[RMDB]
RNA sequence: GGGAACGACUCGAGUAGAGUCGAAAAGACGUUUAUGGCCAGCCGAGCCGUCCUUGAAAGUGUCAGGUAGCAAGCAGUCCUCCAACGUGAGACACAUAAUUCCAUCCUGGUUCGGAUCCGACUGCAGUCGGCUCACCCCUUUCGAGGGGUGAGCCGAAAAAGAAACAACAACAACAAC
Reactivity to 2A3 in 0.01 (KOAc 150mM, MgCl2 10mM, bicine 150mM(pH8.5), 24C), signal-to-noise 1, nucleotides 027 to 126: g050a020c040g000u000u020u300a140u070g020g000c030c000a040g020c070c070g010a010g000c000c060g000u000c010c020u080u060g100a100a070a080g030u090g000u100c000a030g250g000u150a000g060c020a140a070g000c000a030g000u000c000c140u050c000c000a030a000c080g030u140g000a000g060a070c000a000c000a090u220a300a030u200u000c000c080a000u000c000c120u030g020g010u020u000c000g010g000a020u030c000c000g030a030c000u010g000c000a030g090

Chemical mapping of a 177-nucleotide RNA with 2A3. The reactions ran in a buffer of 150 mM KOAc, 10 mM MgCl2 and 150 mM bicine (pH 8.5), at 24 C. For 2A3, 407 sequencing reads were counted. For 2A3 the reverse transcriptase was SuperScript II with manganese.